[RMDB]
RNA sequence: GGGAACGACUCGAGUAGAGUCGAAAAGGCCGGGUCGACUACGUGCAGAGCGGCACGCCCGACCUGAAGUCCGAGCGCGGGCGCUACUGGAGCUACGGCUUCGUCUGGUCGCCGUCGAGCAGGUUCACGACUGGAGGUGAUUCGUCACCUCCAGUCGAAAAGAAACAACAACAACAAC
Reactivity to DMS in 0.01 (KOAc 150mM, MgCl2 10mM, bicine 150mM(pH8.5), 24C), signal-to-noise 2, nucleotides 027 to 126: g000g000c050c020g010g000g000u000c040g000a090c080u000a110c050g020u000g010c030a160g020a160g020c110g020g000c040a050c020g000c110c080c000g010a020c020c030u000g000a080a130g020u010c000c030g010a090g010c050g000c040g010g000g000c040g030c060u000a040c050u010g010g020a140g000c020u000a080c150g050g010c010u020u000c020g010u000c120u000g010g010u000c030g040c010c010g000u000c040g000a150g020c050a100g020g000u000u010c060a190
Reactivity to 2A3 in 0.01 (KOAc 150mM, MgCl2 10mM, bicine 150mM(pH8.5), 24C), signal-to-noise 1, nucleotides 027 to 126: g040g000c000c010g000g010g030u030c050g020a100c040u190a030c120g070u030g030c050a000g030a040g230c110g030g010c040a010c000g000c030c010c000g000a010c000c010u040g040a140a030g030u000c020c030g000a070g000c070g000c000g030g040g000c040g000c020u040a050c060u090g020g020a030g000c020u080a060c160g080g000c040u000u030c010g040u040c070u060g100g020u070c070g020c020c010g100u050c040g030a020g050c040a020g030g080u110u100c050a020
Structure probing data (DMS and 2A3) for a 177-nucleotide construct. DMS adducts were read by reverse transcription with MarathonRT. The reactions ran in a buffer of 150 mM KOAc, 10 mM MgCl2 and 150 mM bicine (pH 8.5), at 24 C. Values cover nucleotides 27 to 126.